Source: RMDB library TTRINS, as collected in RNAgym. Chemical mapping of a 177-nucleotide RNA with DMS. In probing experiments dimethyl sulfate is read out at A N1 and C N3, which are open when not base-paired.

RNA sequence: GGGAACGACUCGAGUAGAGUCGAAAAGAUAUGGAUUAGAAUGAGUUCCCGCAUGAUUGGGAGAAUGCCAUCGGAAACGAUGGAAAUUCGAAGAACAAUAUGCGGGAACUCAUUCUAAUCCUAAGUCCAUUAUCGAUCACUUCGGUGAUCGAUAAUGAAAAGAAACAACAACAACAAC
Reactivity to DMS in 0.01 (KOAc 150mM, MgCl2 10mM, bicine 150mM(pH8.5), 24C), signal-to-noise 1, nucleotides 027 to 126: g000a090u000a300u000g020g020a000u010u000a000g000a010a000u000g000a020g010u010u000c000c010c000g000c000a000u000g000a040u000u000g000g000g000a200g010a020a010u000g040c020c000a000u000c000g040g000a220a160a210c000g010a000u000g000g000a030a070a040u000u000c000g010a160a210g020a170a180c000a000a000u000a020u000g010c020g000g000g010a000a000c010u000c000a000u000u000c010u000a000a000u000c000c000u000a040a070g000u010c050